[RMDB]
RNA sequence: GGGAACGACUCGAGUAGAGUCGAAAAGAUAUGGACCGGCUGAUGACCAUACAUAGUGUACAUCGGAAACGAUGUACCGAGUGUAUGCAAGGCCUGUCCUAAGUCAAAACCCCACUUCGGUGGGGAACAUUACCAUUAUCUUCGGAUAAUGGUAAUGAAAAGAAACAACAACAACAAC
Reactivity to DMS in 0.01 (KOAc 150mM, MgCl2 10mM, bicine 150mM(pH8.5), 24C), signal-to-noise 9, nucleotides 027 to 126: g010a030u000a300u000g000g000a010c010c080g000g010c000u000g010a080u010g000a150c300c010a000u000a000c000a010u000a060g010u010g020u000a000c000a000u000c000g010g000a110a090a200c000g010a010u000g000u000a000c000c000g000a100g020u000g000u000a000u000g000c020a060a100g000g010c000c000u000g010u000c000c000u000a010a080g010u000c030a060a060a090a170c010c000c000c000a010c010u000u010c160g020g000u000g010g000g010g000a010a030
Reactivity to 2A3 in 0.01 (KOAc 150mM, MgCl2 10mM, bicine 150mM(pH8.5), 24C), signal-to-noise 9, nucleotides 027 to 126: g010a000u060a030u150g010g000a010c020c050g010g000c010u040g040a300u140g020a070c040c020a000u010a010c010a010u050a040g250u260g000u280a000c000a000u000c000g010g020a050a070a040c010g000a000u000g000u010a000c000c000g020a080g080u010g000u000a010u000g000c010a080a160g010g000c000c000u000g000u000c000c000u000a130a000g020u000c010a020a040a110a300c000c010c010c000a010c010u080u100c300g120g000u010g000g010g000g000a000a010